[RMDB]
RNA sequence: GGGAACGACUCGAGUAGAGUCGAAAAAGCGUCGUACGCGACGCAAGGAAUUAGUUUUGCAGGUUUGCAUUUCAGCGUAUAUAUAAAGGGGUGGCUGUGCAAAUCCAUGCAAAACUGAUUGUGAUAAAAGUGCUGAUACUUUCGAGUAUCAGCACUUAAAAGAAACAACAACAACAAC
Reactivity to DMS in 0.01 (KOAc 150mM, MgCl2 10mM, bicine 150mM(pH8.5), 24C), signal-to-noise 2, nucleotides 027 to 126: a090g010c010g020u000c000g040u040a090c260g030c000g010a000c000g030c020a030a090g000g010a080a020u000u010a000g010u000u000u000u030g010c000a000g030g000u000u010u000g010c000a030u010u020u030c040a070g040c030g000u010a060u080a050u020a260u040a060a070a100g000g020g040g000u010g010g000c060u000g010u000g000c000a000a010a010u050c020c060a070u010g010c000a000a020a000a010c020u000g000a000u000u000g010u020g000a080u020a120a090
Reactivity to 2A3 in 0.01 (KOAc 150mM, MgCl2 10mM, bicine 150mM(pH8.5), 24C), signal-to-noise 2, nucleotides 027 to 126: a000g000c000g000u000c000g020u050a040c300g000c020g150a000c000g050c010a000a020g080g010a010a030u030u030a010g000u010u010u000u000g000c000a000g000g030u000u000u000g000c000a030u090u050u130c020a010g020c040g150u150a020u010a010u010a070u100a270a150a060g050g000g020g010u160g110g000c050u010g000u000g020c000a000a000a010u060c040c030a020u010g000c000a000a000a000a000c000u010g000a000u000u050g070u110g050a060u080a120a210

Structure probing data (DMS and 2A3) for a 177-nucleotide construct. The data come from the RNA Mapping Database (RMDB), libraries RFM100 and RFMREP. DMS adducts were read by reverse transcription with MarathonRT. The RNA was probed in 150 mM KOAc, 10 mM MgCl2 and 150 mM bicine (pH 8.5) at 24 C.